[RMDB]
RNA sequence: GGGAACGACUCGAGUAGAGUCGAAAAUUCAUCCAACCAACCCCUUCGCAUCUGACAUUUCAACCGCCGCCGGGGCUGGAGCUCGCCCUCGACAGCCGGCCCGCCCACUCGGUUCCGCUUGGCGCGACCAUAUCAUAUUAUUCGUAAUAUGAUAUGGAAAAGAAACAACAACAACAAC
Reactivity to DMS in 0.01 (KOAc 150mM, MgCl2 10mM, bicine 150mM(pH8.5), 24C), signal-to-noise 9, nucleotides 027 to 126: u010u010c070a070u010c020c030a090a160c080c070a090a180c070c020c010c030u000u000c050g010c050a050u000c040u010g010a100c110a070u010u010u010c060a090a110c090c040g010c040c040g010c090c040g020g000g000g010c010u000g010g010a100g020c060u010c140g010c040c020c020u000c070g000a080c100a080g010c020c030g010g010c030c030c030g010c030c010c020a090c070u000c050g000g010u000u000c040c030g010c060u000u000g020g010c040g010c050g010a190
Reactivity to 2A3 in 0.01 (KOAc 150mM, MgCl2 10mM, bicine 150mM(pH8.5), 24C), signal-to-noise 4, nucleotides 027 to 126: u050u020c020a050u040c020c010a010a060c020c020a030a070c000c000c010c000u050u040c020g010c020a060u020c050u080g060a060c030a120u110u170u080c050a090a050c040c030g020c020c030g030c010c010g040g000g020g000c010u040g020g010a030g010c030u040c030g020c020c000c000u010c030g080a060c020a020g020c010c000g020g010c010c010c000g020c000c010c000a040c010u040c020g060g000u050u020c010c010g050c040u050u100g060g020c020g010c010g030a020